Background: Structure probing data (DMS and 2A3) for a 177-nucleotide construct. The reactions ran in a buffer of 150 mM KOAc, 10 mM MgCl2 and 150 mM bicine (pH 8.5), at 24 C. Source: RMDB libraries RFM100 and RFMREP, as collected in RNAgym. For DMS the reverse transcriptase was MarathonRT.
RNA sequence: GGGAACGACUCGAGUAGAGUCGAAAAUCUCGAAGUCGCAGCAGCAGACACGGUUUUGGGUAUCCCCGAAACGGGCUGCGACCGGCGAAGCGAUUCGUUCUCUGCCGCACAACAUUUCCGAGGGGAGUAACGUAGAUCGGUUCGCCGAUCUACGUUAAAAAGAAACAACAACAACAAC
Reactivity to DMS in 0.01 (KOAc 150mM, MgCl2 10mM, bicine 150mM(pH8.5), 24C), signal-to-noise 3, nucleotides 027 to 126: u000c030u000c040g000a170a090g000u010c000g000c010a030g000c000a100g050c140a090g000a130c190a130c080g000g010u000u000u000u000g000g000g010u030a180u020c210c010c000c000g000a000a010a000c030g010g000g030c000u000g000c010g000a020c020c020g020g000c010g000a050a060g000c030g000a030u000u000c030g040u000u010c000u000c010u000g020c020c010g000c060a070c110a080a090c220a100u000u010u010c060c030g000a070g000g000g010g000a050g010
Reactivity to 2A3 in 0.01 (KOAc 150mM, MgCl2 10mM, bicine 150mM(pH8.5), 24C), signal-to-noise 5, nucleotides 027 to 126: u050c030u010c060g040a070a010g030u000c000g000c000a000g000c000a000g010c030a020g050a160c040a050c100g140g010u000u010u010u010g040g020g010u230a170u290c110c010c000c010g000a010a000a000c000g030g060g000c000u010g000c000g000a000c000c000g030g000c050g020a020a010g030c010g040a040u040u060c030g010u020u010c000u000c020u050g090c000c010g040c010a050c000a080a100c020a150u060u100u060c020c020g030a090g020g030g000g010a020g030